RNA sequence: GGGAACGACUCGAGUAGAGUCGAAAAGCUUGUCCAGCCUGGGUUUAAGUUCGAGUUAACGUAUGAGGUGUUUUGCAAGUUGAGACGUUAUGAUAGUGCCAGUGAACAAGAUUUUUUGGCACUUGACUAUACAAAGCCUAUUCGUAGGCUUUGUAUAAAAAGAAACAACAACAACAAC
Reactivity to DMS in 0.01 (KOAc 150mM, MgCl2 10mM, bicine 150mM(pH8.5), 24C), signal-to-noise 8, nucleotides 027 to 126: g010c040u000u000g010u010c040c030a180g010c030c030u000g010g000g020u000u000u000a080a120g010u000u010c070g000a160g010u010u010a040a080c080g010u000a060u000g020a070g010g010u000g010u000u000u010u010g010c060a040a060g010u000u000g000a100g010a090c110g010u010u000a070u010g010a120u000a020g010u000g010c010c010a010g000u010g010a020a040c080a140a130g000a300u000u000u000u000u010u000g010g000c000a020c000u000u000g000a210c200
Reactivity to 2A3 in 0.01 (KOAc 150mM, MgCl2 10mM, bicine 150mM(pH8.5), 24C), signal-to-noise 2, nucleotides 027 to 126: g000c000u030u060g020u080c020c000a010g040c010c010u070g020g150g050u070u040u110a080a060g000u040u070c060g040a070g100u050u090a050a010c050g020u060a080u110g080a020g000g040u080g030u080u070u060u050g030c000a080a000g020u000u060g040a060g000a060c110g000u120u100a090u160g040a050u020a060g000u000g010c000c010a010g000u000g080a040a040c060a190a100g060a150u040u070u030u030u090u040g010g080c000a030c000u030u020g000a010c000
The record gives the reactivity of an RNA of 177 nucleotides to DMS and 2A3. The DMS profile rests on 13,171 reads.